[RMDB]
RNA sequence: GGGAACGACUCGAGUAGAGUCGAAAAGUGCAGAUUGAAAUUCAUGGGAGCCUCUCCAUAAUGGAUGAACGCCGCGUUAGUACGCGCAGUCGCGACGUAAACGCUCUGUAUUCCCGUUCAGGCCUCAAUCCUCAGUACGAUUCGUCGUACUGAGGAUAAAAGAAACAACAACAACAAC
Reactivity to DMS in 0.01 (KOAc 150mM, MgCl2 10mM, bicine 150mM(pH8.5), 24C), signal-to-noise 4, nucleotides 027 to 126: g020u010g010c020a010g000a080u000u010g010a080a150a070u000u000c050a030u000g000g000g000a070g020c140c090u010c070u000c010c000a080u010a080a050u020g010g020a040u000g010a140a080c100g020c110c050g010c010g010u000u000a120g020u000a040c070g020c070g020c050a110g010u010c120g000c000g010a070c020g000u000a030a050a070c040g010c030u010c010u010g010u000a170u000u000c000c000c010g010u000u020c100a110g000g000c060c100u010c120a100
Reactivity to 2A3 in 0.01 (KOAc 150mM, MgCl2 10mM, bicine 150mM(pH8.5), 24C), signal-to-noise 3, nucleotides 027 to 126: g100u040g050c010a010g030a100u080u120g070a170a120a080u050u050c000a010u050g030g020g010a040g030c010c050u130c020u000c050c030a050u220a230a070u140g020g000a010u030g030a080a040c010g040c080c010g010c020g000u010u040a110g040u070a050c020g000c000g000c030a010g200u200c140g020c010g010a180c010g060u010a040a020a020c010g000c010u020c010u030g040u010a050u030u030c000c000c000g000u100u130c060a000g000g030c030c010u070c040a030
Structure probing data (DMS and 2A3) for a 177-nucleotide construct.
Conditions: 150 mM KOAc, 10 mM MgCl2 and 150 mM bicine (pH 8.5), 24 C.